[RMDB]
RNA sequence: GGGAACGACUCGAGUAGAGUCGAAAAUCGAGGAGGGGCAUACAGACCUCACCCCUCAGAGACCUUCUGGGUCUUCCCAGGAGUUGCAAUUUAAUCUGUCACUGUGCCUCGUAGACAGUAGGUGCUCAGCAGUGUAGUCAUUCGUGACUACACUGCUAAAAGAAACAACAACAACAAC
Reactivity to DMS in 0.01 (KOAc 150mM, MgCl2 10mM, bicine 150mM(pH8.5), 24C), signal-to-noise 3, nucleotides 027 to 126: u020c100g030a090g020g020a230g000g010g000g030c070a090u010a160c220a060g010a100c070c010u000c100a230c080c050c000c040u000c070a080g010a210g010a130c080c000u010u000c100u000g010g000g000u000c160u010u000c010c000c000a030g020g000a050g000u020u010g020c120a030a110u020u010u020a180a130u020c030u000g000u000c050a080c000u000g010u000g000c010c020u000c050g010u000a150g030a020c040a020g010u010a100g000g000u000g000c080u000c160
Reactivity to 2A3 in 0.01 (KOAc 150mM, MgCl2 10mM, bicine 150mM(pH8.5), 24C), signal-to-noise 1, nucleotides 027 to 126: u170c030g020a080g000g040a010g000g010g060g050c040a000u080a130c080a110g230a210c000c000u000c020a030c010c040c000c000u020c030a040g030a010g000a050c000c020u010u000c010u000g000g020g120u110c020u180u160c010c000c000a000g000g000a030g000u170u200g030c030a020a010u020u090u230a080a060u110c030u020g010u040c010a020c080u050g020u060g070c000c000u060c010g040u010a170g020a070c010a000g000u050a040g080g040u070g000c020u060c150
Chemical mapping of a 177-nucleotide RNA with DMS and 2A3. For 2A3 the reverse transcriptase was SuperScript II with manganese. It was measured as part of the RMDB library OK2TRN. DMS adducts were read by reverse transcription with MarathonRT. The DMS profile rests on 1,642 reads. The 2A3 profile rests on 992 reads.